[RMDB]
RNA sequence: GGGAACGACUCGAGUAGAGUCGAAAAGAUAUGGAGCCAUGUAUGACCCGUUAGGGAGCUGGAUAAGGGUCGGAAACGACCCGUAACAGCAUCGAUCUAACGGGUCAUACCGCUGGCUCCUAAGUCAGUUAGAUGGAGACUUCGGUCUCCAUCUAACAAAAGAAACAACAACAACAAC
Reactivity to DMS in 0.01 (KOAc 150mM, MgCl2 10mM, bicine 150mM(pH8.5), 24C), signal-to-noise 1, nucleotides 027 to 126: g000a030u020a300u000g000g000a040g000c010c000a000u030g000u020a010u000g000a020c000c000c000g000u020u010a040g000g040g000a030g000c010u000g010g020a150u010a140a300g010g000g010u000c000g000g000a060a130a200c030g000a000c000c000c000g020u010a040a300c000a020g020c000a200u000c230g010a050u010c000u020a000a020c010g010g010g020u010c000a000u010a010c020c000g000c000u000g000g020c000u000c010c000u000a000a090g010u000c040a150